[RMDB]
RNA sequence: GGGAACGACUCGAGUAGAGUCGAAAAGAUAUGGAUACUACAUCCCCCAGACAACAGCUCGGAAACGAGACAUGUCUAUGUGAGUAUCCUAAGUCAAAAGAAAGCACAGCUUCGGCUGUGCUUUCAAGAUCAUACCAUGCUUCGGCAUGGUAUGAUCAAAAGAAACAACAACAACAAC
Reactivity to DMS in 0.01 (KOAc 150mM, MgCl2 10mM, bicine 150mM(pH8.5), 24C), signal-to-noise 1, nucleotides 027 to 126: g020a080u000a210u020g000g000a000u020a020c000u000a040c050a300u000c040c000c000c140c060a020g000a000c010a020a160c250a210g000c020u000c000g020g010a170a060a180c000g000a020g020a050c100a070u000g000u000c020u000a000u020g030u000g000a070g020u000a010u020c000c000u000a070a090g020u000c080a020a080a220a160g000a000a000a020g010c010a010c010a010g030c000u000u010c190g000g000c000u000g000u000g030c010u000u000u000c000a020a060